The record gives the reactivity of an RNA of 177 nucleotides to DMS and 2A3.

[RMDB]
RNA sequence: GGGAACGACUCGAGUAGAGUCGAAAAUUGCGCAAUCAAGGUUCUGGUGAGCAAUAUUAGCAAUCAUUGGUCGCGCCUGGCGACGUAUUCUUUUACCCAGAUUCACGGCCCGGACAUCUCGUCCAUCGAGCUUAUGUUAUUUCGAUAACAUAAGCUCAAAAGAAACAACAACAACAAC
Reactivity to DMS in 0.01 (KOAc 150mM, MgCl2 10mM, bicine 150mM(pH8.5), 24C), signal-to-noise 8, nucleotides 027 to 126: u010u010g020c020g020c040a070a040u000c050a050a060g000g000u010u010c040u000g010g030u010g010a130g020c120a070a070u020a070u020u000a080g000c100a070a040u010c060a110u010u000g000g010u000c020g000c040g010c050c150u000g010g000c040g000a060c040g010u010a040u000u010c030u000u010u010u000a110c060c020c020a070g000a090u010u020c070a060c060g000g010c040c030c120g020g010a050c070a090u010c110u010c110g010u000c020c040a110u020c120
Reactivity to 2A3 in 0.01 (KOAc 150mM, MgCl2 10mM, bicine 150mM(pH8.5), 24C), signal-to-noise 9, nucleotides 027 to 126: u060u070g000c020g010c040a010a040u040c030a060a050g060g000u090u040c030u060g050g010u070g040a080g050c060a070a040u080a080u180u100a030g050c060a040a040u050c050a180u050u100g050g000u020c010g000c010g020c070c040u050g050g000c010g010a060c020g030u050a080u050u060c030u010u090u030u090a090c010c000c000a030g020a140u050u060c050a010c040g030g000c000c020c020g000g010a010c010a080u110c100u040c110g030u000c010c000a030u110c090